[RMDB]
RNA sequence: GGGAACGACUCGAGUAGAGUCGAAAACGACGAUAGUUCGCUAUCGUCGCAAGGGCUGUUUUUCUCGCUGACUUUCAGCCCCAAACAAUAAAGUCAGCAAAAUAAUCGGUGGCUUCGGCCACCGAAAAGAUGUUCUCAUGUUCGCAUGAGAACAUCUAAAAGAAACAACAACAACAAC
Reactivity to DMS in 0.01 (KOAc 150mM, MgCl2 10mM, bicine 150mM(pH8.5), 24C), signal-to-noise 1, nucleotides 027 to 126: c000g050a000c000g000a000u000a000g020u000u000c240g020c000u000a000u000c010g000u000c000g000c090a100a110g010g000g000c010u010g000u000u000u000u000u000c150u000c170g020c000u000g000a030c000u000u000u000c000a000g000c010c010c020c130a050a030a160c070a060a010u000a000a010a000g010u000c000a010g000c000a040a060a060a080u010a080a090u000c000g010g020u000g000g000c010u000u000c110g020g000c000c000a000c000c000g010a010a010a050
Reactivity to 2A3 in 0.01 (KOAc 150mM, MgCl2 10mM, bicine 150mM(pH8.5), 24C), signal-to-noise 1, nucleotides 027 to 126: c010g010a010c000g010a020u000a010g000u070u030c220g000c150u020a000u000c000g000u000c010g000c010a080a120g010g020g040c020u000g030u020u060u000u050u040c090u060c130g020c000u000g000a000c000u010u000u000c000a010g000c000c000c040c030a060a070a020c030a020a000u050a100a010a000g010u000c000a010g010c000a010a010a010a010u040a010a050u030c020g000g020u000g000g010c000u000u060c200g100g020c000c000a010c000c000g000a000a000a000
This 177-nucleotide RNA was probed chemically with DMS and 2A3. Source: RMDB library M2PK50, as collected in RNAgym. DMS adducts were read by reverse transcription with MarathonRT. High 2A3 reactivity points to a flexible backbone, as in loops and unpaired stretches. Reactivities are rounded to 0.1 and cut off at 0 and 3.